[RMDB]
RNA sequence: GGGAACGACUCGAGUAGAGUCGAAAAGAUAUGGAUUCCAUGAGGGAGAGGUGUGUCGGAAACGACACGUCUCAUCGAUCUCAGGAAUCCUAAGUCAAACCCACUUUAGGUUCGCCUAAAGUGGGAACUAGCUACAGAUCUUCGGAUCUGUAGCUAGAAAAGAAACAACAACAACAAC
Reactivity to DMS in 0.01 (KOAc 150mM, MgCl2 10mM, bicine 150mM(pH8.5), 24C), signal-to-noise 1, nucleotides 027 to 126: g000a030u000a130u000g000g000a000u000u000c000c000a140u000g030a040g020g020g000a100g000a010g030g000u010g000u000g030u000c000g010g000a010a040a030c010g000a000c000a000c000g000u010c000u000c000a140u010c300g000a090u000c000u000c020a030g020g000a050a000u000c000c010u010a000a030g000u000c020a130a150a170c000c000c000a030c000u000u000u000a040g000g000u000u040c300g030c000c000u000a000a000a020g050u000g000g000g010a000a060
Reactivity to 2A3 in 0.01 (KOAc 150mM, MgCl2 10mM, bicine 150mM(pH8.5), 24C), signal-to-noise 2, nucleotides 027 to 126: g000a000u000a020u040g030g010a020u040u020c090c110a200u280g010a010g030g140g060a240g010a040g030g020u000g010u000g000u050c010g000g020a020a000a010c000g010a000c000a000c020g010u040c000u000c000a000u060c040g060a090u010c010u010c010a000g010g040a010a020u000c000c010u010a020a000g010u000c030a060a020a300c020c000c000a000c000u010u000u000a040g090g040u070u070c300g200c040c000u000a010a000a000g010u000g000g010g000a020a020

Structure probing data (DMS and 2A3) for a 177-nucleotide construct. For 2A3 the reverse transcriptase was SuperScript II with manganese. It was measured as part of the RMDB library TTRDES. For 2A3, 3,371 sequencing reads were counted.